[RMDB]
RNA sequence: GGGAACGACUCGAGUAGAGUCGAAAAGAUAUGGAACCACGAAGAGGACGUGUGUAGUGAGGUUGCUCGGAAACGAGCAACUCCCCACCACUACACACGUCUACCCACCUUCAGUGGUUCCUAAGUCGAAGGAAUCUUAGUUCGCUAAGAUUCCUUCAAAAGAAACAACAACAACAAC
Reactivity to 2A3 in 0.01 (KOAc 150mM, MgCl2 10mM, bicine 150mM(pH8.5), 24C), signal-to-noise 1, nucleotides 027 to 126: g030a030u160a050u300g010g000a000a000c000c010a010c030g000a010a010g020a020g060g020a010c020g000u000g000u000g000u010a010g020u000g000a010g010g010u000u010g010c000u000c000g030g000a100a090a080c000g000a000g000c000a000a000c000u040c010c010c010c010a040c010c000a000c000u000a000c000a000c010a000c010g000u000c000u000a000c010c020c000a070c000c000u040u020c100a100g000u000g000g000u000u000c000c000u000a030a010g080u050c110
Reactivity to DMS in 0.01 (KOAc 150mM, MgCl2 10mM, bicine 150mM(pH8.5), 24C), signal-to-noise 5, nucleotides 027 to 126: g010a130u010a300u000g000g020a030a010c000c010a000c010g000a020a010g010a150g040g000a010c000g030u000g010u000g020u010a000g010u010g000a160g020g010u000u010g010c000u000c000g010g010a120a060a170c000g010a010g010c010a000a000c000u000c030c020c010c030a300c080c000a000c000u020a010c010a000c010a010c000g000u000c000u000a010c040c050c130a300c070c010u010u000c020a110g050u000g010g010u010u000c000c000u000a000a080g020u000c150